[RMDB]
RNA sequence: GGGAACGACUCGAGUAGAGUCGAAAAGGUUCAUGGUUCGCCAUGAACCAAAAGUACAGCUAUGAGUACAAGUGUCUUAGCAAAAGAUCGAAAGAUCAAAAAAAAGUAGCUCCUUCGGGAGCUACAAGUAAGUUUAUUACUUCGGUAAUAAACUUACAAAAGAAACAACAACAACAAC
Reactivity to 2A3 in 0.01 (KOAc 150mM, MgCl2 10mM, bicine 150mM(pH8.5), 24C), signal-to-noise 2, nucleotides 027 to 126: g000g000u000u010c000a000u010g000g050u030u070c180g050c070c000a000u010g000a000a000c000c000a000a000a020a000g000u000a000c000a010g000c000u030a010u040g010a010g010u010a030c150a300a110g090u110g010u290c010u000u010a000g000c000a000a040a120a040g000a000u020c010g060a050a020a020g010a000u030c010a020a010a060a090a000a000a040a030g000u000a000g000c000u000c010c000u020u040c200g030g000g000a010g000c010u000a000c000a010a010
Reactivity to DMS in 0.01 (KOAc 150mM, MgCl2 10mM, bicine 150mM(pH8.5), 24C), signal-to-noise 2, nucleotides 027 to 126: g020g010u000u010c000a010u000g010g030u010u010c220g040c000c000a000u000g000a000a000c000c000a020a040a020a120g010u000a010c020a270g010c020u000a010u000g000a020g000u000a010c020a090a200g000u010g020u010c010u000u000a020g020c000a200a050a100a070g000a010u000c010g000a110a070a170g000a010u020c010a000a000a000a070a020a060a100a200g020u000a000g000c000u000c000c000u000u010c180g000g010g000a010g020c000u000a000c000a010a050